[RMDB]
RNA sequence: GGGAACGACUCGAGUAGAGUCGAAAAAAAAUGGGCUUUUCUGGAAAAGAGUUCACAGGUCCCAUGUCGGCUUUAUGGCAUGAACACAACACAUUGUUAGUAAAGCUUCCACUGGUAGGAACAGGCCAUCAGAGUAACUUCUGUUACAAAACUGUCCUCUACAUGACAAAUUCGUUUGUCAUGUAGAAAAAGAAACAACAACAACAAC
Reactivity to 2A3 in 0.01 (KOAc 150mM, MgCl2 10mM, bicine 150mM(pH8.5), 24C), signal-to-noise 7, nucleotides 027 to 156: a000a000a000a020u060g000g000g010c030u050u090u080u050c050u090g090g040a090a120a070a060g070a060g040u080u060c080a070c000a140g010g070u040c020c010c010a010u080g110u080c060g040g010c020u030u030u020a030u050g020g020c010a000u050g090a190a020c130a010c040a170a150c040a010c010a090u130u150g020u030u020a100g030u040a080a000a010g000c000u070u030c040c020a060c120u030g010g000u010a010g010g010a090a020c000a000g010g000c040c000a040u090c050a040g050a020g110u040a010a030c020u130u140c070u210g050u050u050a030c060a010a040a020a040c000u010g000u020c000c010
Reactivity to DMS in 0.01 (KOAc 150mM, MgCl2 10mM, bicine 150mM(pH8.5), 24C), signal-to-noise 3, nucleotides 027 to 156: a050a020a080a070u000g010g020g010c020u010u000u000u000c050u000g020g010a170a080a040a050g010a050g000u010u000c010a080c060a150g010g000u000c010c000c010a110u010g020u000c050g030g020c040u000u000u000a030u010g030g000c020a070u000g010a120a140c130a230c090a080a090c090a090c060a080u000u010g010u000u000a080g020u000a060a050a050g020c010u000u000c030c040a110c080u010g000g030u010a050g040g010a060a050c020a030g000g010c040c040a110u000c070a080g000a160g000u000a030a060c150u000u000c140u000g020u010u000a080c020a050a040a050a050c020u000g000u000c010c020